[RMDB]
RNA sequence: GGGAACGACUCGAGUAGAGUCGAAAAGAAAGAAAGAAUAGCUGUGAUGAAAUUUGUGUCAAAUGUGUUGACGGGUUCAUCACUAUCGUUUAACUUCGGUUGCGAAAACUGGCACAUCUGAGCUUAACUACAGAUGGCUAUUCGUAGCCAUCUGUAGAAAAGAAACAACAACAACAAC
Reactivity to 2A3 in 0.01 (KOAc 150mM, MgCl2 10mM, bicine 150mM(pH8.5), 24C), signal-to-noise 7, nucleotides 027 to 126: g100a020a050a000g100a030a120a000g090a070a050u120a130g030c050u040g040u060g060a050u050g070a080a100a120u130u140u120g170u040g000u010c010a020a060a130u170g060u050g080u090u020g000a010c000g070g100g000u010u000c000a000u010c000a010c000u030a060u020c010g010u040u100u200a020a010c010u040u070c170g090g000u010u020g000c020g010a020a010a050a130c080u070g010g000c010a030c010a050u010c040u060g040a020g040c000u060u080a060a010
Reactivity to DMS in 0.01 (KOAc 150mM, MgCl2 10mM, bicine 150mM(pH8.5), 24C), signal-to-noise 3, nucleotides 027 to 126: g010a110a040a040g000a090a060a110g010a080a060u020a080g000c100u000g000u000g000a020u000g000a020a030a050u000u010u020g020u030g010u000c020a010a060a160u050g030u000g010u000u000g010a010c040g000g000g000u030u000c000a000u000c000a030c010u020a080u000c030g010u000u000u020a020a090c020u010u020c140g000g010u000u000g000c020g010a030a040a140a110c150u020g010g000c030a040c090a040u000c040u010g000a080g000c030u000u010a040a250